[RMDB]
RNA sequence: GGGAACGACUCGAGUAGAGUCGAAAAGAUAUGGAUCCGUGAAGGCUGGUGAGGUUCGGAAACGAACCCACUUUCGAGCCCACGGAUCCUAAGUCAAAAUCGUCUCCAAGUUCGCUUGGAGACGAAAGCCUCGAUCAUUGUUCGCAAUGAUCGAGGCAAAAGAAACAACAACAACAAC
Reactivity to 2A3 in 0.01 (KOAc 150mM, MgCl2 10mM, bicine 150mM(pH8.5), 24C), signal-to-noise 1, nucleotides 027 to 126: g020a000u000a000u070g020g010a000u040c040c000g050u060g040a300a300g190g000c260u290g000g000u010g060a300g050g020u000u000c010g020g000a010a030a020c000g040a020a030c000c000c020a010c000u090u180u230c210g140a080g000c000c020c020a000c000g070g000a000u030c000c030u010a000a000g000u040c000a000a000a000a240u040c010g020u040c000u000c040c010a050a000g010u150u270c240g050c200u000u020g000g040a010g000a020c010g000a000a000a000